[RMDB]
RNA sequence: GGGAACGACUCGAGUAGAGUCGAAAAAAAUACAAGCGGGGCCGCUAAGUACUCAAUGCCCCAUUAUAACCCGCUGCAGCUGUCUCAUGCUCUGCAUGUGACGAUAUUUUACAUGUUAAGCUUGAUGCGUGAGUGAUAAUUUCGAUUAUCACUCACGAAAAGAAACAACAACAACAAC
Reactivity to 2A3 in 0.01 (KOAc 150mM, MgCl2 10mM, bicine 150mM(pH8.5), 24C), signal-to-noise 2, nucleotides 027 to 126: a030a020a000u150a050c030a040a030g030c060g000g000g060g000c030c010g030c220u100a130a000g120u040a110c030u030c150a060a100u190g030c000c010c000c010a000u030u020a010u000a040a010c020c000c030g000c090u070g080c070a060g010c010u120g030u100c000u020c040a000u030g000c020u030c030u300g000c000a010u000g000u010g000a010c050g010a000u020a130u140u110u070u060a080c070a060u070g020u050u060a000a040g000c040u010u040g060a050u130g090
Reactivity to DMS in 0.01 (KOAc 150mM, MgCl2 10mM, bicine 150mM(pH8.5), 24C), signal-to-noise 3, nucleotides 027 to 126: a090a090a100u000a090c060a110a070g030c050g040g020g000g050c120c100g020c120u010a060a080g000u010a070c140u010c130a090a080u010g010c030c020c000c040a070u000u000a100u000a110a140c010c010c050g010c100u000g000c120a100g020c120u010g000u010c020u010c010a010u010g010c000u010c090u000g000c000a010u000g010u000g010a040c240g020a080u010a010u000u000u000u010a070c080a030u010g000u000u000a040a040g010c020u000u000g030a080u010g010